[RMDB]
The record gives the reactivity of an RNA of 177 nucleotides to 2A3 and DMS. For DMS the reverse transcriptase was MarathonRT. 2A3 adducts were read by reverse transcription with SuperScript II with manganese. It was measured as part of the RMDB library TTRDEL. Values cover nucleotides 27 to 126.
RNA sequence: GGGAACGACUCGAGUAGAGUCGAAAAGAUAUGGAUCCGAACUACUUCUAGUAUGGCGUUUGACGUCGGAAACGACCGAGCCAUACGAAGAAGCGGAUCCUAAGUCAAACGGCCGUUCGCGGCCGAAGGUCUUUUAAAUCUUCGGAUUUAAAAGACCAAAAGAAACAACAACAACAAC
Reactivity to 2A3 in 0.01 (KOAc 150mM, MgCl2 10mM, bicine 150mM(pH8.5), 24C), signal-to-noise 2, nucleotides 027 to 126: g000a000u060a020u130g010g010a010u000c000c020g050a140a070c080u220a050c000u300u010c010u020a030g010u010a010u010g010g020c080g080u090u300u270g110a160c150g010u000c000g010g030a070a060a030c000g000a010c040c010g020a000g000c000c000a000u000a000c000g000a020a020g000a010a010g010c000g000g020a000u000c000c000u010a060a040g020u000c000a090a080a120c000g000g030c000c000g050u100u060c300g020c020g220g030c010c000g010a010a020
Reactivity to DMS in 0.01 (KOAc 150mM, MgCl2 10mM, bicine 150mM(pH8.5), 24C), signal-to-noise 2, nucleotides 027 to 126: g010a030u000a300u020g010g010a000u000c010c010g000a090a020c050u020a280c020u000u000c000u010a260g010u000a010u000g010g010c010g050u000u000u030g000a170c300g000u010c010g000g000a090a090a150c010g000a000c000c030g010a090g000c000c000a000u000a000c000g000a080a080g030a020a030g030c010g020g000a000u000c000c000u010a000a080g010u000c000a080a170a240c010g010g030c000c000g000u010u000c240g030c000g000g020c000c000g010a020a060